[RMDB]
The data come from the RNA Mapping Database (RMDB), library OK3TST.
This 207-nucleotide RNA was probed chemically with 2A3.
Values cover nucleotides 27 to 156.
RNA sequence: GGGAACGACUCGAGUAGAGUCGAAAAUCAAUGAAGAUCACUGGCUUGGAAGAAAGAACUCAGGAGGAGGUGUCGAGGGCUUGGGUCUCCAAAAACUGGGUUACAUCCUGCGUGAAGUUGGCACCCGACCUGGGGGCAAGAUCUAUGCUGACGACACGAUGCCAAGAUGAUUCGUCAUCUUGGCAUCAAAAGAAACAACAACAACAAC
Reactivity to 2A3 in 0.01 (KOAc 150mM, MgCl2 10mM, bicine 150mM(pH8.5), 24C), signal-to-noise 1, nucleotides 027 to 156: u110c030a000a140u090g030a050a010g010a030u100c020a010c070u050g050g050c030u040u070g050g020a040a020g030a050a080a040g010a050a000c030u030c060a030g000g040a030g050g000a060g050g020u030g080u070c000g000a030g000g060g070c050u020u080g080g010g000u020c010u000c020c000a040a140a000a070a110c040u020g000g000g000u020u030a020c050a050u060c010c050u080g020c030g070u050g060a070a070g050u090u100g000g000c000a030c000c000c000g070a080c010c050u050g040g000g000g000g000c040a080a000g000a030u050c010u020a110u160g020c000u000g030a050c040g020a020c040a010c110
The RNA was probed in 150 mM KOAc, 10 mM MgCl2 and 150 mM bicine (pH 8.5) at 24 C.